[RMDB]
RNA sequence: GGGAACGACUCGAGUAGAGUCGAAAAAGAUGGUCUCUGUUGUCCAGGCUAGAGGGCAGUGGUGUGAUCAUGGCUCACAACAGCCUUGACCUCCCAGGCUUAGGUGAUCCUCCUACCUCACCCUCCUGAGUAGUUGGACCACAGGUGUGCACCACUAAUUUACUAGGUGAUUCGUCACCUAGUAAAUAAAAGAAACAACAACAACAAC
Reactivity to 2A3 in 0.01 (KOAc 150mM, MgCl2 10mM, bicine 150mM(pH8.5), 24C), signal-to-noise 4, nucleotides 027 to 156: a000g120a200u050g000g020u030c020u010c000u030g020u010u000g010u000c000c030a050g070g040c020u040a030g010a050g030g040g030c050a050g020u100g100g040u070g040u070g040a060u160c140a130u140g020g010c010u030c010a010c000a060a150c030a050g000c000c000u040u110g110a240c020c040u110c030c040c010a000g020g030c010u090u110a080g010g160u000g010a000u010c010c010u010c000c010u040a050c010c000u000c000a030c010c000c000u020c020c010u080g070a060g050u040a030g010u040u030g000g000a010c000c020a000c010a000g080g080u080g050u090g080c060a010c010c000a020c020u040a050
Reactivity to DMS in 0.01 (KOAc 150mM, MgCl2 10mM, bicine 150mM(pH8.5), 24C), signal-to-noise 4, nucleotides 027 to 156: a070g010a120u000g030g010u000c000u000c020u010g020u000u000g010u000c020c020a090g020g020c020u000a050g000a190g010g010g010c060a080g020u000g030g020u000g020u000g000a030u000c050a070u010g010g030c020u010c060a120c140a110a160c170a050g010c020c010u000u010g000a110c030c030u000c050c020c030a130g020g010c070u000u010a060g030g030u000g000a080u000c030c020u000c090c030u000a050c040c030u000c050a070c010c010c020u000c010c030u000g010a110g020u000a070g020u000u000g000g000a050c000c050a050c030a050g020g030u010g020u000g020c050a110c020c010a030c050u000a080